[RMDB]
RNA sequence: GGGAACGACUCGAGUAGAGUCGAAAACUGCAGGUCAACGGAUGCUCUUCAGAUCAGCUAUUGCAGAAGAAAGGUCAGCCAAGCGCUCUGGGCCGUAUCGACUGUAUAUAGGAGCUUCUGAUUUCAACCAGAAGCUAACUCUCUCCGAAACAAUGAGAGCUACUCACUGAUUCGUCAGUGAGUAGCUAAAAGAAACAACAACAACAAC
Reactivity to 2A3 in 0.01 (KOAc 150mM, MgCl2 10mM, bicine 150mM(pH8.5), 24C), signal-to-noise 2, nucleotides 027 to 156: c010u040g000c060a020g050g050u040c040a030a010c030g080g010a050u050g020c040u040c040u090u050c010a050g020a280u050c040a030g040c010u010a010u000u030g050c000a000g000a080a020g010a050a070a000g030g010u030c020a000g000c020c020a220a000g050c070g010c080u000c060u120g060g000g000c020c020g050u070a050u080c030g010a020c000u000g040u020a040u000a000u060a220g090g020a020g000c000u000u000c000u030g100a150u170u300u080c070a070a000c030c000a000g000a000a000g000c020u010a090a100c030u010c000u010c030u020c070c040g080a080a110a060c050a020a220u170g040a080g000

The record gives the reactivity of an RNA of 207 nucleotides to 2A3. The 2A3 profile rests on 805 reads. Values are in units of 0.01, from 0 to 300, in steps of 10. Source: RMDB library OK3TST, as collected in RNAgym.